[RMDB]
RNA sequence: GGGAACGACUCGAGUAGAGUCGAAAAGAUAUGGAUUAUCGGUCCCAGGCUAUGAAGAAGCUCGGAAACGAGCUUUGGAGCCUGGAGCCGAGUAAUCCUAAGUCAAACAAUGGGUUCGCCCAUUGAAGACAUUGGUAAAGUUCGCUUUACCAAUGUCAAAAGAAACAACAACAACAAC
Reactivity to DMS in 0.01 (KOAc 150mM, MgCl2 10mM, bicine 150mM(pH8.5), 24C), signal-to-noise 4, nucleotides 027 to 126: g010a090u010a300u000g000g000a040u010u000a050u000c000g010g000u000c010c000c000a020g010g020c010u000a240u030g010a170a290g000a010a020g000c000u000c010g020g010a140a120a200c010g010a000g010c000u000u000u000g010g000a010g020c010c000u000g010g000a030g000c000c010g000a020g020u000a030a020u000c000c000u010a050a120g000u000c060a190a130a240c010a000a000u000g000g000g000u000u020c300g010c000c000c000a000u000u000g000a160a160
Reactivity to 2A3 in 0.01 (KOAc 150mM, MgCl2 10mM, bicine 150mM(pH8.5), 24C), signal-to-noise 3, nucleotides 027 to 126: g020a000u100a070u250g000g000a000u000u000a020u050c010g000g030u050c000c010c010a000g010g000c000u080a200u300g010a050a050g000a010a000g000c000u000c010g020g040a040a020a040c000g000a000g000c000u010u010u000g000g010a020g000c030c000u000g000g000a000g000c010c000g010a010g010u030a020a000u000c000c000u000a170a020g080u030c050a130a080a110c000a000a060u000g040g000g040u070u110c300g210c010c000c000a000u000u020g020a070a030
Conditions: 150 mM KOAc, 10 mM MgCl2 and 150 mM bicine (pH 8.5), 24 C. The record gives the reactivity of an RNA of 177 nucleotides to DMS and 2A3. DMS adducts were read by reverse transcription with MarathonRT. Reactivities are given for positions 27 through 126. It was measured as part of the RMDB library TTRDES.